[RMDB]
RNA sequence: GGGAACGACUCGAGUAGAGUCGAAAACUCCAGGGAUUCAACGGCUCUUCCCAUACUUACCUUCAGAUUUUACCUCCACCAGUGGCUGUGUAUUCACAGGGUCACAGCCUCGAAAUGUUCAAAUAGGAAGACAAGAUCCCUUAAGGGAUCAGUGAUCCAACUUUAAUAGCUUCGGCUAUUAAAGUUGAAAAGAAACAACAACAACAAC
Reactivity to 2A3 in 0.01 (KOAc 150mM, MgCl2 10mM, bicine 150mM(pH8.5), 24C), signal-to-noise 3, nucleotides 027 to 156: c040u040c020c030a040g010g000g010a030u120u060c070a070a050c080g030g000c020u040c010u030u030c010c010c000a030u060a050c030u050u100a080c020c000u060u110c040a060g060a300u050u030u080u260a090c020c030u080c040c020a070c010c020a030g020u030g050g000c000u000g010u020g020u090a090u080u110c060a060c080a270g130g000g000u010c000a000c010a000g020c000c000u000c000g050a060a060a010u110g030u120u110c050a040a040a040u080a070g030g050a050a030g030a020c020a010a050g030a020u020c020c010c010u070u190a110a230g000g000g000a010u000c020a040g030u030g080a040u020c020
Reactivity to DMS in 0.01 (KOAc 150mM, MgCl2 10mM, bicine 150mM(pH8.5), 24C), signal-to-noise 2, nucleotides 027 to 156: c030u000c040c020a110g000g030g030a120u000u000c070a100a120c020g030g030c020u010c040u000u000c020c010c000a180u000a080c030u010u000a050c050c010u000u010c010a170g000a160u000u000u000u000a060c030c020u010c030c020a090c070c040a180g020u000g010g010c010u000g030u000g000u000a030u010u000c080a170c220a140g030g000g010u000c000a030c000a060g010c010c000u000c080g030a030a080a080u010g020u000u020c040a090a050a090u010a120g020g000a100a120g000a130c050a040a110g010a020u000c000c000c020u000u000a110a130g010g020g010a030u000c020a090g010u000g000a150u010c020
Structure probing data (2A3 and DMS) for a 207-nucleotide construct. For 2A3 the reverse transcriptase was SuperScript II with manganese. For 2A3, 2,207 sequencing reads were counted. The RNA was probed in 150 mM KOAc, 10 mM MgCl2 and 150 mM bicine (pH 8.5) at 24 C.